Structure probing data (2A3 and DMS) for a 177-nucleotide construct. For 2A3 the reverse transcriptase was SuperScript II with manganese. Values cover nucleotides 27 to 126.

[RMDB]
RNA sequence: GGGAACGACUCGAGUAGAGUCGAAAAGAUAUGGAUUAAGGGAGCGAUGCUGCCGAAGAACACUAGCUCGGAAACGAGCUAGUGGGAGGCACAGUAUAAAAAUCGCAUCGAUCUUAAUCCUAAGUCACCAUUGGAUAAUCUUCGGAUUAUCCAAUGGAAAAGAAACAACAACAACAAC
Reactivity to 2A3 in 0.01 (KOAc 150mM, MgCl2 10mM, bicine 150mM(pH8.5), 24C), signal-to-noise 1, nucleotides 027 to 126: g030a010u040a030u110g020g000a030u000u010a030a000g060g020g000a160g040c000g020a040u140g010c180u010g020c010c040g220a130a030g000a000a000c000a000c000u000a000g010c000u050c030g010g000a040a040a030c000g010a000g000c040u000a020g000u000g000g000g000a010g010g000c010a040c060a170g170u180a140u300a300a300a060a050a030u170c020g000c010a230u190c000g070a050u060c000u040u020a010a000u000c000c010u000a060a000g000u000c000a020
Reactivity to DMS in 0.01 (KOAc 150mM, MgCl2 10mM, bicine 150mM(pH8.5), 24C), signal-to-noise 1, nucleotides 027 to 126: g010a000u000a110u010g000g010a000u000u000a000a000g030g000g010a080g030c000g010a020u000g000c200u000g020c000c010g000a150a150g020a160a260c000a010c000u000a000g000c000u000c000g020g000a030a020a130c000g010a010g060c000u010a000g010u000g000g000g000a050g020g050c020a060c080a090g020u000a090u030a020a170a120a170a070u000c040g000c000a110u020c120g000a140u000c000u000u000a010a020u000c000c000u010a020a080g000u010c000a250